[RMDB]
RNA sequence: GGGAACGACUCGAGUAGAGUCGAAAAGAAUUUUAGAAAAGCAAGGCCCUAGAAGCAGCACCCGAAAUGCUGAGGGCUAAUUUGGGGUUUAGGAGCAACCUUUCCUGGAAAAAGUGGAAAGGAAAGAACGACGUAGUCGUUUCGACGACUACGUCGUAAAAGAAACAACAACAACAAC
Reactivity to 2A3 in 0.01 (KOAc 150mM, MgCl2 10mM, bicine 150mM(pH8.5), 24C), signal-to-noise 2, nucleotides 027 to 126: g010a000a000u160u140u220u230a080g050a080a140a040a000g080c060a070a020g090g060c020c000c000u100a170g040a150a000g170c080a000g030c040a050c050c020c050g000a040a060a000u200g000c060u100g030a100g040g010g000c000u000a060a090u040u120u050g030g000g020g020u000u000u030a040g000g110a170g040c010a010a010c000c010u010u020u000c010c000u030g080g000a150a100a080a000a030g210u060g000g000a020a050a000g030g000a000a040a000g010a030
Reactivity to DMS in 0.01 (KOAc 150mM, MgCl2 10mM, bicine 150mM(pH8.5), 24C), signal-to-noise 3, nucleotides 027 to 126: g030a120a060u030u040u030u030a130g010a100a070a120a100g020c130a140a130g010g000c000c000c000u000a080g030a040a020g010c000a030g020c160a120c010c010c040g020a100a050a090u010g010c020u000g000a040g010g000g010c000u010a000a030u020u010u020g010g000g000g000u000u020u000a080g020g000a090g020c100a130a190c020c000u000u010u010c000c000u010g000g040a170a060a100a110a180g060u020g000g010a010a030a010g000g000a020a080a080g000a110

This 177-nucleotide RNA was probed chemically with 2A3 and DMS. Reactivities are given for positions 27 through 126. For 2A3, 706 sequencing reads were counted. The reactions ran in a buffer of 150 mM KOAc, 10 mM MgCl2 and 150 mM bicine (pH 8.5), at 24 C. The data come from the RNA Mapping Database (RMDB), library OK1LIB.